[RMDB]
RNA sequence: GGGAACGACUCGAGUAGAGUCGAAAAGGGACUGGCCCGAUGAAGCCCGGCAACCUAACUUUAUUUAAGCGUAAAGUGAAGGUGCUAUUUCCAGCAAAAUGGUGUAUUCCGUUUUGGUAGAUAAGAGAAGCGUGACAUGAGUUCGCUCAUGUCACAAGAAAUCCUUUUUGUUCGCAAAAAGGAUUUCAAAAGAAACAACAACAACAAC
Reactivity to DMS in 0.01 (KOAc 150mM, MgCl2 10mM, bicine 150mM(pH8.5), 24C), signal-to-noise 3, nucleotides 027 to 156: g000g010g000a150c050u010g000g030c020c010c010g000a120u010g010a140a140g010c000c020c060g010g000c020a050a060c010c000u000a120a040c000u000u000u000a020u010u000u000a100a210g030c300g000u010a000a000a020g010u000g010a140a080g020g010u000g000c020u000a120u000u010u010c010c010a060g000c030a000a020a020a020u000g020g010u000g020u000a120u010u010c010c020g010u000u000u000u000g000g010u000a050g010a080u000a060a120g000a140g020a100a140g010c150g030u000g020a010c000a000u000g010a030g010u000u010c300g040c000u000c000a010u000g000u000c000a010c000a020a060
Reactivity to 2A3 in 0.01 (KOAc 150mM, MgCl2 10mM, bicine 150mM(pH8.5), 24C), signal-to-noise 5, nucleotides 027 to 156: g010g000g010a010c010u020g050g020c000c010c010g010a040u110g050a030a030g040c010c000c000g000g020c040a130a120c000c010u010a010a010c010u030u020u040a060u080u170u140a180a040g100c060g020u000a010a000a000g010u020g080a140a030g000g000u000g000c000u010a050u070u060u040c020c020a000g000c010a080a020a010a010u030g000g030u080g040u140a110u150u080c010c010g010u020u010u010u010g010g030u080a090g040a170u140a190a090g050a020g070a160a030g120c050g060u000g000a000c000a000u000g000a000g010u040u110c170g020c100u000c000a000u000g000u000c000a000c000a000a000